Record summary
Source: RMDB library OK2TST, as collected in RNAgym. An RNA of 177 nucleotides, treated with 2A3 and DMS and read out base by base. Values cover nucleotides 27 to 126.

RNA sequence: GGGAACGACUCGAGUAGAGUCGAAAAUCAGGUUCAACGUCAUUGUCUCUAACUAUCCUGUCUGUAAGAAAGUGUAGAGCAAGCAAUGUUGUAAAAAUAAUAUUGCUAACCAAUGAAAAAUAGAUAACACUACAACGUGAUUCGUCACGUUGUAGUGAAAAGAAACAACAACAACAAC
Reactivity to 2A3 in 0.01 (KOAc 150mM, MgCl2 10mM, bicine 150mM(pH8.5), 24C), signal-to-noise 4, nucleotides 027 to 126: u070c010a000g070g070u060u070c050a060a040c090g090u010c020a050u000u080g060u050c000u010c000u000a020a020c010u020a060u100c010c000u040g180u190c040u090g140u150a050a030g040a150a090a010g040u110g080u080a010g000a020g020c030a020a000g000c000a010a010u010g010u030u020g060u120a130a160a100a000a000u120a020a020u010a000u040u010g000c010u020a050a080c000c030a030a060u050g070a060a110a030a020a000u140a060g180a090u160a100a010
Reactivity to DMS in 0.01 (KOAc 150mM, MgCl2 10mM, bicine 150mM(pH8.5), 24C), signal-to-noise 4, nucleotides 027 to 126: u000c070a060g000g030u020u010c070a070a110c170g000u000c020a050u000u000g010u000c020u000c000u000a060a050c020u000a050u000c050c020u000g000u000c080u000g020u010a100a100g000a050a130a020g000u000g020u000a030g010a050g010c300a080a040g000c000a020a010u000g000u000u000g050u020a040a090a080a100a090u000a030a010u000a010u000u000g000c000u000a060a150c240c050a040a030u000g010a030a060a070a120a060u010a070g010a110u000a070a150
High 2A3 reactivity points to a flexible backbone, as in loops and unpaired stretches. The RNA was probed in 150 mM KOAc, 10 mM MgCl2 and 150 mM bicine (pH 8.5) at 24 C. 2A3 adducts were read by reverse transcription with SuperScript II with manganese.